[RMDB]
RNA sequence: GGGAACGACUCGAGUAGAGUCGAAAAGUAAAAAGGAGAUAAUUAUCCCAACACCCUGUUUACAUCAUAUCUUUUGAUAUUCAAGUGAGAUAACAUAGGUCUGCAUUAUAACCUGCAAAAUGUUAAUUAUAAAACCAAAAAACAUUUGAAUUUCAGAUAUUUACAUGUACUUCGGUACAUGUAAAUAAAAAGAAACAACAACAACAAC
Reactivity to DMS in 0.01 (KOAc 150mM, MgCl2 10mM, bicine 150mM(pH8.5), 24C), signal-to-noise 1, nucleotides 027 to 156: g000u000a000a060a030a130a040g030g000a080g040a160u000a100a080u030u000a070u000c000c020c000a050a120c050a100c070c030c040u000g020u000u010u030a130c090a140u010c040a080u010a120u000c020u000u000u010u000g050a040u010a030u010u000c000a080a060g040u030g000a260g030a220u000a010a120c040a040u000a070g010g010u000c040u000g020c040a120u000u000a080u010a080a140c040c040u030g000c050a110a080a030a060u010g000u000u000a030a070u000u000a110u030a060a080a080a260c100c110a000a120a090a080a020a080c000a030u000u000u000g010a000a040u000u000u000c020a070g000a300
Reactivity to 2A3 in 0.01 (KOAc 150mM, MgCl2 10mM, bicine 150mM(pH8.5), 24C), signal-to-noise 2, nucleotides 027 to 156: g050u060a030a050a010a030a040g050g060a150g020a070u190a210a130u300u240a150u060c010c000c020a050a020c040a030c010c000c030u040g100u070u170u110a080c050a070u190c020a010u160a140u110c040u060u140u060u080g030a040u010a000u040u020c020a000a000g000u000g010a080g040a150u070a050a020c020a040u130a080g020g120u020c070u050g010c030a000u060u120a080u260a270a060c010c030u040g050c040a090a050a130a020u020g020u010u030a040a060u140u080a080u180a160a070a030a040c050c050a030a170a040a040a060a050c030a010u040u070u060g000a030a010u000u010u030c000a000g020a040